[RMDB]
RNA sequence: GGGAACGACUCGAGUAGAGUCGAAAAGGUUAGGUUAUAGAGGAUGCGUCCUCAAUUGCGCUGGCAUGGUACUGUCAGACUGUGAUUACACGUGGGACGGGGUGGGGCUCGAAUACGAGGCUUCGCCGUCGUGCGAGGUAUUCGUACCUCGCACGACAAAAGAAACAACAACAACAAC
Reactivity to 2A3 in 0.01 (KOAc 150mM, MgCl2 10mM, bicine 150mM(pH8.5), 24C), signal-to-noise 1, nucleotides 027 to 126: g120g010u150u130a000g040g040u050u080a100u050a170g050a030g050g000a010u080g050c090g100u000c010c010u000c040a010a020u010u010g000c050g000c000u020g010g000c000a030u120g200g070u200a100c070u040g010u040c010a010g030a110c040u220g010u030g020a030u000u060a020c050a030c160g020u120g040g050g040a010c000g000g020g050g050u080g010g030g020g030c010u000c000g050a110a020u130a110c040g000a020g030g000c000u070u020c000g040c020c000
Reactivity to DMS in 0.01 (KOAc 150mM, MgCl2 10mM, bicine 150mM(pH8.5), 24C), signal-to-noise 2, nucleotides 027 to 126: g010g000u000u000a030g020g000u000u010a110u000a130g000a050g000g000a040u000g010c160g010u010c000c000u000c030a040a030u000u000g010c060g000c010u010g020g010c000a070u000g020g010u000a090c260u000g020u000c020a030g000a020c030u000g040u000g010a050u000u000a100c140a080c170g020u010g000g000g010a050c000g000g010g010g040u020g000g000g000g000c010u000c020g030a140a060u010a000c100g000a030g000g000c040u000u000c020g000c010c050